An RNA of 177 nucleotides, treated with DMS and read out base by base. Reactivities are given for positions 27 through 126. It was measured as part of the RMDB library OK2TRN. For DMS, 1,014 sequencing reads were counted. The reactions ran in a buffer of 150 mM KOAc, 10 mM MgCl2 and 150 mM bicine (pH 8.5), at 24 C.
RNA sequence: GGGAACGACUCGAGUAGAGUCGAAAAGCGAUUAAGUGAGUCGAGAAGGCAUUAGAUACUGUCCUACAGUAUCCACAAGGCCACUGUAGAACAGUGGCUUAUGCGUUUUUGAAUCACUGUAUAGCGAGGAGACGUGUGUAUUCGUACACACGUCUCCAAAAGAAACAACAACAACAAC
Reactivity to DMS in 0.01 (KOAc 150mM, MgCl2 10mM, bicine 150mM(pH8.5), 24C), signal-to-noise 1, nucleotides 027 to 126: g010c000g000a050u000u010a020a000g020u000g010a010g000u000c000g020a000g000a000a020g000g000c000a000u010u000a050g000a010u000a000c000u000g000u000c190c110u000a060c000a000g020u000a050u000c000c020a090c240a070a210g010g020c010c000a020c000u010g000u000a140g010a060a300c000a000g030u000g000g010c000u000u000a000u000g010c000g000u000u000u000u000u010g000a020a060u000c010a010c000u000g000u000a010u010a090g000c010g010a150